[RMDB]
The record gives the reactivity of an RNA of 207 nucleotides to 2A3. The RNA was probed in 150 mM KOAc, 10 mM MgCl2 and 150 mM bicine (pH 8.5) at 24 C. The data come from the RNA Mapping Database (RMDB), library OK3TST.
RNA sequence: GGGAACGACUCGAGUAGAGUCGAAAACAACAAUCACCACAAAACCAUCCACCAAAGCACUUACAAACAAAAUUUGGACAGAUAUUCAAAAUUUCGCUAAAAAUAACGAAGACAUGCAGAAAAUCCUCAUGGGAUAUAAAACCUUCCACGCAACACCUCAAGACGGUAACUUCGGUUACCGUCUUGAAAAAGAAACAACAACAACAAC
Reactivity to 2A3 in 0.01 (KOAc 150mM, MgCl2 10mM, bicine 150mM(pH8.5), 24C), signal-to-noise 1, nucleotides 027 to 156: c030a000a030c030a050a190u090c070a070c080c000a040c040a030a120a080a000c050c010a070u000c000c000a000c000c000a060a000a040g010c000a000c010u140u160a040c130a060a120a000c010a010a160a200a270u060u050u050g000g000a000c010a050g030a080u100a070u150u090c010a000a010a090a090u130u070u150c030g010c040u090a060a030a070a130a240u080a190a000c030g010a000a000g030a010c010a050u050g000c000a020g050a100a080a000a000u010c000c030u070c050a100u070g040g010g110a010u100a000u030a040a080a000a060c020c080u040u000c040c030a030c050g010c010a060a060c040a050c020c030